[RMDB]
RNA sequence: GGGAACGACUCGAGUAGAGUCGAAAAGAGCUUUUUUUCGAAAAAGCUCCGGCGCAAUGCCUAUGUGUACACUUCACAAGGGUUUGUGGUGGUCAAAGGCAAUACCAGCAAUCUUCGGAUUGCUGAAAAUUGGUAUCGAAUUCGUUCGAUACCAAUUAAAAGAAACAACAACAACAAC
Reactivity to DMS in 0.01 (KOAc 150mM, MgCl2 10mM, bicine 150mM(pH8.5), 24C), signal-to-noise 4, nucleotides 027 to 126: g010a010g010c000u000u000u000u000u000u000u010c130g010a020a010a000a010a020g020c000u000c000c060g000g010c120g020c130a130a070u010g010c000c000u000a080u010g010u010g010u010a130c070a030c050u000u000c020a010c020a040a220g010g010g010u010u000u010g010u000g010g010u000g000g010u000c040a030a090a020g000g010c030a060a090u000a100c180c000a010g000c010a000a000u000c000u000u010c170g010g000a010u000u000g010c000u000g000a020a020
Reactivity to 2A3 in 0.01 (KOAc 150mM, MgCl2 10mM, bicine 150mM(pH8.5), 24C), signal-to-noise 2, nucleotides 027 to 126: g020a000g000c000u000u030u030u010u000u050u110c110g060a000a020a010a000a010g000c010u000c010c000g070g000c050g010c080a080a080u080g010c000c000u050a100u130g100u000g010u030a060c060a050c080u100u140c030a020c030a070a130g300g050g000u060u100u010g000u010g010g070u010g060g000u080c030a090a010a000g000g000c000a030a040u110a160c070c010a000g000c000a000a000u000c010u000u000c050g060g000a000u000u000g000c000u000g020a050a000
Structure probing data (DMS and 2A3) for a 177-nucleotide construct. Conditions: 150 mM KOAc, 10 mM MgCl2 and 150 mM bicine (pH 8.5), 24 C. It was measured as part of the RMDB library M2PK50.